This 207-nucleotide RNA was probed chemically with 2A3. 2A3 adducts were read by reverse transcription with SuperScript II with manganese. Values cover nucleotides 27 to 156. It was measured as part of the RMDB library OK3TST.

RNA sequence: GGGAACGACUCGAGUAGAGUCGAAAAUCGGCAACAAGAGCGAAACUCUGUCUAAAACAAAAACAAACAAACAAACAAAAAAACCCAGGCAAAGUUUCCUUGCAGCCAAGGUGACAGAACUGGGCUGAGGGUGGAAAAGAAACAGAACCAGUGCUCCUACUCACAAAACAUUCGUGUUUUGUGAGUAAAAAGAAACAACAACAACAAC
Reactivity to 2A3 in 0.01 (KOAc 150mM, MgCl2 10mM, bicine 150mM(pH8.5), 24C), signal-to-noise 2, nucleotides 027 to 156: u090c000g060g010c020a040a020c010a090a120g050a020g080c120g020a070a020a030c010u040c030u030g010u040c030u110a040a040a080a030c110a060a180a080a100a000c040a010a060a060c020a050a060a030c010a020a210a030c040a050a210a030a050a060a050a050c080c000c060a010g080g030c030a020a110a000g000u010u000u000c000c000u030u050g000c090a040g100c080c010a030a020g010g020u030g020a010c020a040g040a060a040c010u000g000g010g010c000u020g000a020g010g040g000u090g030g010a020a040a090a120g050a010a020a000c020a010g220a010a000c010c020a040g010u000g040c030u010c000c000